[RMDB]
The record gives the reactivity of an RNA of 177 nucleotides to DMS. Conditions: 150 mM KOAc, 10 mM MgCl2 and 150 mM bicine (pH 8.5), 24 C. For DMS, 1,474 sequencing reads were counted.
RNA sequence: GGGAACGACUCGAGUAGAGUCGAAAAGGUAUGAUUGCUGAAGACAGGGAUGUUGGCGUUUUAUGGGUGUUACUUGGGCUGCUCUUCAGAUGCCAUGACAUGCAAAGUUUCCAGAGGACUUACAUAGCUUUCAUCCCUCUUUCGAGAGGGAUGAAAGAAAAGAAACAACAACAACAAC
Reactivity to DMS in 0.01 (KOAc 150mM, MgCl2 10mM, bicine 150mM(pH8.5), 24C), signal-to-noise 1, nucleotides 027 to 126: g030g030u000a050u000g010a080u010u000g010c040u010g010a070a070g010a060c080a100g010g010g000a050u000g010u010u000g010g050c080g010u020u000u000u010a060u010g030g010g020u010g010u000u000a130c100u000u010g010g020g030c030u010g000c070u020c030u000u020c090a060g000a140u010g000c000c050a050u000g010a080c070a050u010g000c070a020a080a070g030u000u000u000c040c000a150g020a160g020g000a060c070u020u000a050c160a110u000a150g000